[RMDB]
Conditions: 150 mM KOAc, 10 mM MgCl2 and 150 mM bicine (pH 8.5), 24 C. The record gives the reactivity of an RNA of 207 nucleotides to 2A3 and DMS. 2A3 adducts were read by reverse transcription with SuperScript II with manganese. DMS adducts were read by reverse transcription with MarathonRT.

RNA sequence: GGGAACGACUCGAGUAGAGUCGAAAACUGUGAAGCCUCAAGGGAGUCAUGGUUAUGCCUGCCAAACACAAAAUGCAUGCCAUCAGCCAUCUGUGGAAAUCUUCCCAGGAAGUAACUCUCCCCAAGCGAUGCGUUGUAAAUGGGCUGCUGCUGCAAAAGUCAUUAAAUUAUUCGUAAUUUAAUGACUAAAAGAAACAACAACAACAAC
Reactivity to 2A3 in 0.01 (KOAc 150mM, MgCl2 10mM, bicine 150mM(pH8.5), 24C), signal-to-noise 4, nucleotides 027 to 156: c030u010g000u010g060a060a020g070c020c040u080c220a130a150g060g000g020a040g030u020c020a010u030g010g020u060u160a030u090g020c010c010u000g050c060c060a120a190a030c070a030c040a100a130a050a010u110g010c010a010u100g020c020c010a030u030c010a040g020c010c020a050u040c080u060g060u110g040g000a050a090a120u060c020u050u020c010c050c000a030g060g030a050a020g010u110a070a050c020u030c010u040c080c000c000c010a030a020g050c030g080a050u050g040c060g030u020u030g060u050a090a110a100u080g000g040g000c010u000g000c020u010g000c010u030g030c010a100a070a000
Reactivity to DMS in 0.01 (KOAc 150mM, MgCl2 10mM, bicine 150mM(pH8.5), 24C), signal-to-noise 3, nucleotides 027 to 156: c020u000g020u000g010a060a100g010c020c020u010c060a130a140g020g020g030a060g020u030c040a030u000g010g000u010u000a060u020g020c020c160u010g000c060c060a070a070a100c100a120c060a070a070a090a190u000g000c040a040u000g010c040c030a070u000c030a120g010c020c050a070u000c040u000g010u010g010g020a020a100a120u000c090u000u010c010c020c050a130g020g010a040a060g010u000a050a060c070u000c040u000c010c000c010c040a060a190g020c040g000a080u000g010c070g020u000u000g030u020a040a060a110u010g010g020g030c010u010g040c000u000g000c010u010g000c040a030a090a120